[RMDB]
RNA sequence: GGGAACGACUCGAGUAGAGUCGAAAAUCUUCUGUCAAACAGCAGAUACGGCACAUGCUAACAACAUUAACAGAUUUAAUGUUGCAAUCACUCGUGCCCAAAAAGGUAUUCUUUGUGUUAUGACAUCGAUUUAGAUAUUCUUCGGAAUAUCUAAAUCAAAAGAAACAACAACAACAAC
Reactivity to 2A3 in 0.01 (KOAc 150mM, MgCl2 10mM, bicine 150mM(pH8.5), 24C), signal-to-noise 9, nucleotides 027 to 126: u010c010u210u020c030u040g010u010c010a020a020a030c010a030g150c010a010g010a040u020a040c050g010g000c000a000c000a020u030g000c020u060a070a040c010a000a000c000a000u000u010a020a010c030a150g220a300u090u050u030a010a000u010g000u000u000g000c030a020a050u050c010a010c070u110c080g000u010g000c000c000c020a050a110a020a010a010g140g010u050a060u130u060c030u040u110u120g120u010g020u040u050a210u100g010a010c010a040u070c100
Reactivity to DMS in 0.01 (KOAc 150mM, MgCl2 10mM, bicine 150mM(pH8.5), 24C), signal-to-noise 9, nucleotides 027 to 126: u000c030u000u010c070u000g010u010c020a020a040a050c030a060g010c130a040g000a040u000a050c070g010g010c010a010c010a100u000g010c100u000a170a160c010a010a010c000a000u000u000a010a040c260a240g010a150u010u010u000a000a000u000g010u000u000g000c040a060a100u010c060a040c260u000c140g010u000g010c000c010c300a040a050a070a080a050g010g010u000a040u000u010c030u010u000u000g030u000g000u000u000a120u000g000a020c020a040u010c150